[RMDB]
RNA sequence: GGGAACGACUCGAGUAGAGUCGAAAAGAUAUGGACACACUAUGUAAGUUCUCCAUCGAUCUCGGAAACGAGGGAGGAGACUUACCGCUGGUGUGUCCUAAGUCAAAGUAGUACUUCGGUACUACAAGGUAUUGAAAACGUUCGCGUUUUCAAUACCAAAAGAAACAACAACAACAAC
Reactivity to DMS in 0.01 (KOAc 150mM, MgCl2 10mM, bicine 150mM(pH8.5), 24C), signal-to-noise 2, nucleotides 027 to 126: g010a030u000a300u000g010g000a030c000a000c000a010c010u000a000u020g010u000a000a020g010u010u020c020u000c030c000a300u020c200g000a030u020c000u000c000g010g000a070a050a170c010g000a000g010g000g010a010g020g000a000g010a010c010u000u000a000c000c000g010c010u000g000g010u000g020u000g000u000c000c000u000a000a040g040u000c050a050a060a200g020u000a000g010u000a000c000u010u010c160g030g000u000a000c000u000a000c010a080a040
Reactivity to 2A3 in 0.01 (KOAc 150mM, MgCl2 10mM, bicine 150mM(pH8.5), 24C), signal-to-noise 2, nucleotides 027 to 126: g020a010u100a020u160g000g000a000c000a000c000a000c010u010a020u300g000u000a000a020g050u300u100c000u020c000c020a240u300c020g020a030u000c030u010c000g030g050a110a100a070c020g000a010g000g000g010a000g000g000a010g010a000c010u000u000a000c000c010g040c010u010g000g010u020g000u000g010u020c000c000u000a000a000g010u000c020a010a100a050g000u010a010g000u020a000c010u060u080c300g050g020u000a010c000u020a010c020a010a070